RNA sequence: GGGAACGACUCGAGUAGAGUCGAAAAGAUUAACCAGGCUAAAACUUAGGGUGUCCCAAGUUUGGGGAAUACGAAAUAUCUUGUAAAGCCGCAAUCAAAACCUCACAUGUUAAAACCCAUUGUACACGUUUGUGAAGCGAUUCGUCGCUUCACAGAUAAAAGAAACAACAACAACAAC
Reactivity to 2A3 in 0.01 (KOAc 150mM, MgCl2 10mM, bicine 150mM(pH8.5), 24C), signal-to-noise 3, nucleotides 027 to 126: g030a020u080u100a050a030c020c010a020g060g000c010u080a100a050a060a100c040u090u080a070g090g000g000u040g050u050c000c000c000a030a070g110u070u060u060g020g000g000g030a020a040u050a070c010g030a090a050a020u180a060u040c050u070u040g040u050a060a090a040g040c000c040g070c040a010a040u050c020a010a060a070a110c000c000u000c010a030c000a020u040g000u000u040a030a030a020a030c000c000c000a030u050u070g030u060a040c130a010c110
Reactivity to DMS in 0.01 (KOAc 150mM, MgCl2 10mM, bicine 150mM(pH8.5), 24C), signal-to-noise 6, nucleotides 027 to 126: g010a110u010u000a090a120c050c070a090g010g020c030u000a060a070a070a050c040u000u010a060g000g000g010u000g010u010c000c010c010a060a080g010u000u000u010g020g010g000g000a090a080u000a070c080g000a050a080a090u010a070u010c080u010u000g010u010a060a150a110g010c030c020g010c090a060a040u000c070a060a070a070a090c050c050u000c070a030c080a040u000g000u000u010a030a040a080a110c040c030c020a080u000u010g020u010a080c150a060c160

Structure probing data (2A3 and DMS) for a 177-nucleotide construct. Conditions: 150 mM KOAc, 10 mM MgCl2 and 150 mM bicine (pH 8.5), 24 C. DMS adducts were read by reverse transcription with MarathonRT.